[RMDB]
RNA sequence: GGGAACGACUCGAGUAGAGUCGAAAAAUUGGGGCUGUGCUCCAUUACCCACAGUUGUGCAGGGAAGUGAACUAGACCAGGAGUCACGAAGUUGAGCUGAGCCUCUGUAGGGUGCUUGGGCUGUUGCUUCUUCUGGUUGGAUGCCAGGUACCUUACCAUCCCUUGGUAAGUUCGCUUACCAAGGGAUAAAAGAAACAACAACAACAAC
Reactivity to DMS in 0.01 (KOAc 150mM, MgCl2 10mM, bicine 150mM(pH8.5), 24C), signal-to-noise 1, nucleotides 027 to 156: a080u010u000g000g010g030g040c000u000g010u000g000c020u000c000c020a090u010u000a120c010c000c030a110c110a170g060u000u000g010u000g050c020a080g020g020g020a120a120g000u000g020a060a080c090u000a140g000a080c020c000a070g000g030a090g000u000c040a130c080g020a100a060g020u000u000g020a070g040c000u000g000a060g010c000c010u000c040u000g010u000a080g030g010g020u010g030c060u020u000g010g040g040c030u010g010u000u000g010c000u030u000c050u000u010c040u000g030g040u000u000g030g000a140u000g010c020c030a050g010g010u000a020c030c020u000u000a080c110c110
Reactivity to 2A3 in 0.01 (KOAc 150mM, MgCl2 10mM, bicine 150mM(pH8.5), 24C), signal-to-noise 3, nucleotides 027 to 156: a020u080u070g020g000g000g000c040u190g080u200g110c010u000c010c010a010u020u180a050c000c050c010a000c010a070g190u270u230g090u140g050c080a100g030g010g030a090a050g050u030g050a080a000c030u020a050g080a080c020c020a030g060g050a040g020u040c030a030c110g070a060a030g040u170u150g010a000g000c010u040g040a020g030c000c010u000c060u050g040u010a080g010g020g000u050g010c020u030u050g020g010g000c040u060g020u100u050g030c010u010u040c000u080u060c020u040g040g020u040u030g040g000a030u040g000c000c000a020g030g040u070a030c010c030u020u050a020c050c020
This 207-nucleotide RNA was probed chemically with DMS and 2A3. For DMS, 4,593 sequencing reads were counted. The RNA was probed in 150 mM KOAc, 10 mM MgCl2 and 150 mM bicine (pH 8.5) at 24 C. 2A3 adducts were read by reverse transcription with SuperScript II with manganese. DMS adducts were read by reverse transcription with MarathonRT.